[RMDB]
RNA sequence: GGGAACGACUCGAGUAGAGUCGAAAAGCAAAUAAAGUGCCUUCUUCGCCGAUGGCGUUUUGCAGCCUGGGCAGCACAUCCCAGAUAGAUUCUUUGCUGGCUGCCACAAUGCUUGGAUUGGUGGUGAUCCCCACGAAAAUUUCGAUUUUCGUGGGGAAAAAGAAACAACAACAACAAC
Reactivity to 2A3 in 0.01 (KOAc 150mM, MgCl2 10mM, bicine 150mM(pH8.5), 24C), signal-to-noise 2, nucleotides 027 to 126: g040c020a000a000a070u200a190a160a010g170u130g040c010c000u030u060c020u050u100c060g100c130c000g090a100u130g000g010c030g060u050u090u090u070g010c000a000g010c000c050u050g020g020g000c010a000g020c050a020c040a040u050c030c000c020a020g040a090u120a030g040a000u140u000c000u030u090u120g040c000u040g040g030c010u020g000c010c000a070c070a180a000u110g020c000u070u050g030g010a120u030u070g010g000u040g000g000u000g060a040
Reactivity to DMS in 0.01 (KOAc 150mM, MgCl2 10mM, bicine 150mM(pH8.5), 24C), signal-to-noise 2, nucleotides 027 to 126: g010c030a030a030a160u000a140a060a100g000u020g000c020c020u000u010c020u000u010c220g000c160c140g000a060u000g000g010c010g010u000u010u020u030g000c150a050g010c030c030u000g000g040g000c030a110g000c030a080c090a080u000c020c010c040a040g000a110u030a080g020a150u020u000c020u000u010u010g010c040u010g000g010c010u000g020c020c030a130c170a060a100u020g010c030u000u020g000g000a070u030u050g020g020u000g000g000u000g020a110
An RNA of 177 nucleotides, treated with 2A3 and DMS and read out base by base. DMS (dimethyl sulfate) methylates the pairing face of unpaired adenines and cytosines. The reactions ran in a buffer of 150 mM KOAc, 10 mM MgCl2 and 150 mM bicine (pH 8.5), at 24 C. The data come from the RNA Mapping Database (RMDB), library OK1LIB.